[RMDB]
RNA sequence: GGGAACGACUCGAGUAGAGUCGAAAAGAUGACAAGGUCAAGGUAGCACUGAGAGGAAGUCGGUGCAGAGGUAGGAUUCCGACUCAGGUCUGGGGUCUCAUGCUGAUGUUCUUGCCAUUAGUCAGACCAACUUAAGGUACUUCGGUACCUUAAGUUGAAAAGAAACAACAACAACAAC
Reactivity to 2A3 in 0.01 (KOAc 150mM, MgCl2 10mM, bicine 150mM(pH8.5), 24C), signal-to-noise 6, nucleotides 027 to 126: g100a060u050g000a000c010a040a040g040g010u230c030a020a010g040g030u040a020g050c010a010c030u020g010a030g010a050g210g190a120a060g110u030c010g000g000u010g000c040a020g030a030g110g040u070a040g010g040a030u050u000c010c000g010a010c010u020c090a100g000g200u020c050u210g000g000g000g020u000c020u010c050a070u130g010c010u030g010a120u130g040u100u030c010u010u010g000c000c010a100u050u060a040g020u030c010a000g010a030c010
Reactivity to DMS in 0.01 (KOAc 150mM, MgCl2 10mM, bicine 150mM(pH8.5), 24C), signal-to-noise 8, nucleotides 027 to 126: g010a090u000g010a030c030a060a050g020g000u010c030a060a180g020g010u000a100g010c020a030c040u010g010a060g010a170g010g010a130a120g010u000c010g010g010u000g020c030a080g010a140g000g010u000a070g000g010a080u000u000c020c020g000a020c010u010c250a160g000g010u010c010u020g040g000g010g000u000c010u000c070a110u010g010c010u000g000a240u010g000u000u010c010u000u000g010c020c000a050u010u010a100g000u000c060a070g010a210c120
This 177-nucleotide RNA was probed chemically with 2A3 and DMS. Reactivities are rounded to 0.1 and cut off at 0 and 3. For DMS, 11,828 sequencing reads were counted. The reactions ran in a buffer of 150 mM KOAc, 10 mM MgCl2 and 150 mM bicine (pH 8.5), at 24 C.